[RMDB]
RNA sequence: GGGAACGACUCGAGUAGAGUCGAAAACCAGAGAGUAGUCUCAGGGCAUCCUCUGGAGCCUGACCUGUGAUCGUCGCAUCAUAGACCGCCAGUAGACCUGGGAGCAGAUUCACCGCCGCGGCCGUCUUCUAGUGUUCCCUUUCGAGGGAACACUAGAAAAAGAAACAACAACAACAAC
Reactivity to 2A3 in 0.01 (KOAc 150mM, MgCl2 10mM, bicine 150mM(pH8.5), 24C), signal-to-noise 4, nucleotides 027 to 126: c000c000a000g020a000g000a020g060u160a030g030u030c010u000c060a060g010g010g000c030a080u020c000c010u060c040u050g030g030a040g040c000c040u080g030a080c010c010u010g020u020g040a020u020c040g070u080c070g140c050a000u010c000a010u050a030g020a050c030c030g040c010c020a040g020u090a020g040a080c020c030u040g030g010g010a010g020c030a000g000a050u070u080c040a000c060c020g020c020c020g000c040g010g010c000c000g010u030c040u000
Reactivity to DMS in 0.01 (KOAc 150mM, MgCl2 10mM, bicine 150mM(pH8.5), 24C), signal-to-noise 2, nucleotides 027 to 126: c010c000a110g010a060g010a130g000u030a100g000u000c020u010c070a130g000g000g000c000a150u000c100c000u030c000u000g020g010a070g000c010c050u000g020a040c110c030u000g000u020g010a060u020c100g010u020c060g000c010a060u010c020a020u040a040g000a100c070c040g010c000c010a050g020u010a060g000a130c010c010u020g000g000g000a070g000c060a060g000a040u000u000c090a080c030c030g010c010c000g000c160g000g020c040c030g000u020c000u030